[RMDB]
RNA sequence: GGGAACGACUCGAGUAGAGUCGAAAAUCGUGAGAUGUGGUGCCUCACGCGCUCGAGGCGUCCGUGGUCAGAGAGACCACUGACGCAAAAACUCGAGCGCAAAUAAAACGCAUUACAUUAAGAAUAAAGUCCAUCCAUUAUUCGUAAUGGAUGGACUAAAAGAAACAACAACAACAAC
Reactivity to 2A3 in 0.01 (KOAc 150mM, MgCl2 10mM, bicine 150mM(pH8.5), 24C), signal-to-noise 2, nucleotides 027 to 126: u130c020g010u030g060a110g000a030u100g000u000g010g000u000g000c000c000u000c010a040c020g000c000g000c000u000c000g000a000g010g010c000g000u000c000c000g000u000g020g000u000c030a030g090a070g050a020g000a300c000c000a000c000u000g000a000c000g000c000a000a070a010a130a070c000u000c000g000a000g010c000g000c000a000a000a000u100a000a040a000a000c060g000c000a000u000u010a000c000a010u130u140a110a070g110a100a160u220a280a080
Reactivity to DMS in 0.01 (KOAc 150mM, MgCl2 10mM, bicine 150mM(pH8.5), 24C), signal-to-noise 2, nucleotides 027 to 126: u010c000g010u010g000a010g010a020u030g050u000g000g000u000g030c020c040u000c080a050c130g000c000g000c000u010c000g010a000g010g020c030g000u000c000c020g060u000g020g010u000c010a190g040a210g000a300g020a000c000c000a000c010u010g000a000c000g120c010a020a040a090a150a280c020u000c000g000a010g010c000g000c000a000a000a030u010a010a020a070a090c190g060c000a000u000u000a020c000a060u020u030a060a120g020a080a020u000a020a130
Source: RMDB library OK1LIB, as collected in RNAgym.
Structure probing data (2A3 and DMS) for a 177-nucleotide construct.
The 2A3 profile rests on 1,363 reads.
For DMS, 2,163 sequencing reads were counted.
The reactions ran in a buffer of 150 mM KOAc, 10 mM MgCl2 and 150 mM bicine (pH 8.5), at 24 C.